[RMDB]
RNA sequence: GGGAACGACUCGAGUAGAGUCGAAAACGCAUUGUGCAGCAGCCCGGCGAAACCUGGUUCGCGCGUACGCAGGAAGAUUCUCGUGAGUGGCCGGAAACGGUGCGUACCUUGCUGAUUCCAGAGCAUACCACUUAGCGUAGUUCGCUACGCUAAGUGGAAAAGAAACAACAACAACAAC
Reactivity to DMS in 0.01 (KOAc 150mM, MgCl2 10mM, bicine 150mM(pH8.5), 24C), signal-to-noise 3, nucleotides 027 to 126: c070g000c050a090u010u010g020u000g030c030a180g040c100a090g010c030c030c070g020g010c030g000a040a060a150c060c020u000g010g020u010u000c090g010c050g040c300g010u010a020c030g020c030a060g000g000a120a050g000a100u020u020c070u000c090g020u020g000a130g020u010g000g000c010c010g000g000a040a090a100c020g000g020u000g030c040g000u000a100c050c060u000u010g000c020u020g000a110u000u000c020c020a140g000a070g000c070a090u000a130
Reactivity to 2A3 in 0.01 (KOAc 150mM, MgCl2 10mM, bicine 150mM(pH8.5), 24C), signal-to-noise 3, nucleotides 027 to 126: c030g000c010a030u020u110g030u070g060c080a070g020c010a020g050c030c010c000g030g000c050g040a080a040a060c030c010u020g070g010u050u090c030g000c030g000c140g180u050a010c090g020c050a010g050g040a060a030g050a150u150u050c030u060c080g050u120g060a080g020u140g070g000c030c000g010g050a090a030a020c030g000g020u010g020c010g020u050a070c010c000u050u100g000c030u060g040a140u130u000c010c000a010g010a010g080c000a020u080a180
This 177-nucleotide RNA was probed chemically with DMS and 2A3. Values cover nucleotides 27 to 126. Source: RMDB library OK2TST, as collected in RNAgym.